[RMDB]
RNA sequence: GGGAACGACUCGAGUAGAGUCGAAAACAGGAGUUCGCUCCUGAAAUGCGCCCAGGGAUAUAAUAGCGGUAAACUUCAAAGACCACUUUUCUAUCCCUGGUACUGGACCGCUUUGCUUCGGCAAAGCCACGAUCUAGUCAUUCGUGACUAGAUCGUGAAAAGAAACAACAACAACAAC
Reactivity to DMS in 0.01 (KOAc 150mM, MgCl2 10mM, bicine 150mM(pH8.5), 24C), signal-to-noise 2, nucleotides 027 to 126: c000a000g000g000a040g030u000u010c260g010c010u000c000c010u000g010a080a030a100u000g020c080g010c300c010c000a030g000g000g000a030u000a010u000a010a020u000a010g020c040g000g010u020a040a050a170c230u010u010c300a110a140a100g000a000c000c010a020c000u000u000u000u000c060u000a010u000c000c030c010u020g000g000u000a000c040u010g010g030a120c070c040g020c010u000u000u000g010c000u000u000c230g000g000c020a000a020a010g010c030
Reactivity to 2A3 in 0.01 (KOAc 150mM, MgCl2 10mM, bicine 150mM(pH8.5), 24C), signal-to-noise 2, nucleotides 027 to 126: c010a000g000g010a020g010u060u070c130g050c130u020c000c000u010g010a040a020a040u160g030c110g080c000c000c000a010g010g010g000a000u000a000u010a010a040u050a000g020c010g000g060u050a110a120a180c120u220u160c200a160a130a000g040a030c000c000a020c000u010u050u000u010c010u010a010u000c000c000c000u000g020g000u010a050c030u040g020g050a040c030c030g010c000u000u010u000g000c000u000u050c170g100g000c010a000a000a000g000c000

An RNA of 177 nucleotides, treated with DMS and 2A3 and read out base by base. The RNA was probed in 150 mM KOAc, 10 mM MgCl2 and 150 mM bicine (pH 8.5) at 24 C. Source: RMDB library RFMREP, as collected in RNAgym.